[RMDB]
Chemical mapping of a 177-nucleotide RNA with DMS and 2A3. The 2A3 profile rests on 43,263 reads. Reactivities are given for positions 27 through 126. The reactions ran in a buffer of 150 mM KOAc, 10 mM MgCl2 and 150 mM bicine (pH 8.5), at 24 C. For 2A3 the reverse transcriptase was SuperScript II with manganese. For DMS, 44,414 sequencing reads were counted.
RNA sequence: GGGAACGACUCGAGUAGAGUCGAAAAGAUCUUCCACUACAGAGACCACACUGCUCUCGGAGCAAUGGAACGUGUUACAACGAUGGAAGAUGUAUAAAUGGUUUCUGUGUCUGUGAACCUGAUUAUACCAUACUACCUAUUUCGAUAGGUAGUAUGGAAAAGAAACAACAACAACAAC
Reactivity to DMS in 0.01 (KOAc 150mM, MgCl2 10mM, bicine 150mM(pH8.5), 24C), signal-to-noise 9, nucleotides 027 to 126: g000a050u000c010u000u000c010c000a060c160u010a090c090a080g010a170g010a040c020c030a110c020a030c050u000g010c000u000c010u010c230g020g010a020g010c010a020a030u000g010g010a080a120c140g020u000g010u000u010a130c150a100a080c100g010a120u000g000g000a020a020g000a020u000g020u000a040u010a040a080a120u010g010g010u000u000u000c020u000g010u000g010u010c080u000g010u010g010a050a080c050c030u000g010a100u000u000a090u010a160
Reactivity to 2A3 in 0.01 (KOAc 150mM, MgCl2 10mM, bicine 150mM(pH8.5), 24C), signal-to-noise 9, nucleotides 027 to 126: g040a010u010c000u010u000c010c000a020c040u100a020c020a020g130a010g020a090c010c000a010c010a010c020u010g000c000u010c020u110c110g250g030a010g000c000a030a300u030g030g030a130a050c040g070u060g040u120u080a070c070a180a020c080g050a080u030g000g010a010a010g010a010u010g060u010a090u030a020a100a060u100g040g000u010u030u010c030u030g100u040g100u010c050u080g130u060g070a030a030c000c000u010g020a050u070u190a070u060a090